[RMDB]
RNA sequence: GGGAACGACUCGAGUAGAGUCGAAAAAAAAUGCUGGACCAGAGCGUGCUCACUCCCAGGGCCAAGGCAGCGCUUAACUGGUUCUCUUUUUGCUGUGACAUCACUUUUUAUAAGGGCUUCUGACAUAUGAAACAUGUCUCAUUACAGAAGACAGACACCAUAGGUAUUAUUUCGAUAAUACCUAUGGAAAAGAAACAACAACAACAAC
Reactivity to DMS in 0.01 (KOAc 150mM, MgCl2 10mM, bicine 150mM(pH8.5), 24C), signal-to-noise 2, nucleotides 027 to 156: a010a070a060a050u010g010c130u010g020g000a030c010c010a150g010a070g030c060g040u000g020c030u000c060a100c050u010c030c010c040a300g050g030g030c010c050a140a090g000g010c020a060g050c020g050c030u010u030a040a160c040u000g030g010u000u000c030u010c000u000u000u010u010u000g040c010u000g010u010g000a130c060a080u000c030a090c020u000u000u000u000u000a150u000a150a060g000g000g020c010u000u000c030u000g030a090c050a080u000a040u010g010a210a040a150c110a060u010g000u000c020u000c030a090u010u000a220c080a100g000a090a010g010a050c020a090g020a100c060a150
Reactivity to 2A3 in 0.01 (KOAc 150mM, MgCl2 10mM, bicine 150mM(pH8.5), 24C), signal-to-noise 3, nucleotides 027 to 156: a000a000a000a000u080g000c050u070g000g010a030c000c000a010g000a000g050c020g000u080g000c000u010c020a090c040u000c000c000c000a010g000g010g020c020c020a130a090g100g010c050a070g040c030g000c020u140u140a130a060c020u040g000g000u000u000c050u080c010u030u090u020u110u150g040c030u030g020u060g040a060c020a060u150c020a060c080u160u130u010u060u100a160u130a120a060g040g040g010c000u030u000c010u010g100a100c020a050u160a020u090g080a100a110a020c050a100u190g100u070c010u000c010a020u020u100a040c000a040g020a030a000g030a050c020a030g080a030c030a010
This 207-nucleotide RNA was probed chemically with DMS and 2A3.
The 2A3 profile rests on 1,350 reads.
Source: RMDB library OK3TST, as collected in RNAgym.
For DMS the reverse transcriptase was MarathonRT.
The reactions ran in a buffer of 150 mM KOAc, 10 mM MgCl2 and 150 mM bicine (pH 8.5), at 24 C.
DMS (dimethyl sulfate) methylates the pairing face of unpaired adenines and cytosines.